[RMDB]
RNA sequence: GGGAACGACUCGAGUAGAGUCGAAAACACCCACAUGCCAAGCAAGAAACGCUUGAGAUAGCGAAGCUUAGCAGAUGAGUGAAUGAAGCGGGAGGUAACGUUCCGAUCUCGCGCCGUCUUUGCUUGGACAGUAAGGAAUUUUCGAAUUCCUUACUGUAAAAGAAACAACAACAACAAC
Reactivity to DMS in 0.01 (KOAc 150mM, MgCl2 10mM, bicine 150mM(pH8.5), 24C), signal-to-noise 9, nucleotides 027 to 126: c210a150c010c000c010a120c270a100u010g000c000c010a010a010g000c000a040a040g010a100a180a210c030g000c010u000u010g010a140g010a080u010a020g000c010g010a110a220g000c010u000u000a070g010c170a070g000a120u010g010a040g020u010g000a090a070u010g010a300a140g010c010g000g000g010a030g000g010u000a040a150c070g000u000u000c030c010g010a050u000c010u000c010g000c020g020c040c100g010u010c050u000u010u010g020c000u000u000g000g000
Reactivity to 2A3 in 0.01 (KOAc 150mM, MgCl2 10mM, bicine 150mM(pH8.5), 24C), signal-to-noise 9, nucleotides 027 to 126: c110a080c000c060c000a020c020a030u120g030c000c000a000a000g000c000a020a010g030a080a140a010c010g000c000u040u060g020a020g020a040u100a010g010c020g060a090a010g010c030u090u090a030g030c050a030g050a260u150g030a060g060u090g060a070a150u070g020a110a010g020c010g030g060g010a030g030g030u090a170a050c060g050u090u000c020c020g030a080u000c000u000c010g180c000g000c050c030g080u040c000u040u070u080g000c000u000u010g010g010
Description:
Structure probing data (DMS and 2A3) for a 177-nucleotide construct. Conditions: 150 mM KOAc, 10 mM MgCl2 and 150 mM bicine (pH 8.5), 24 C. It was measured as part of the RMDB libraries RFM100 and RFMREP.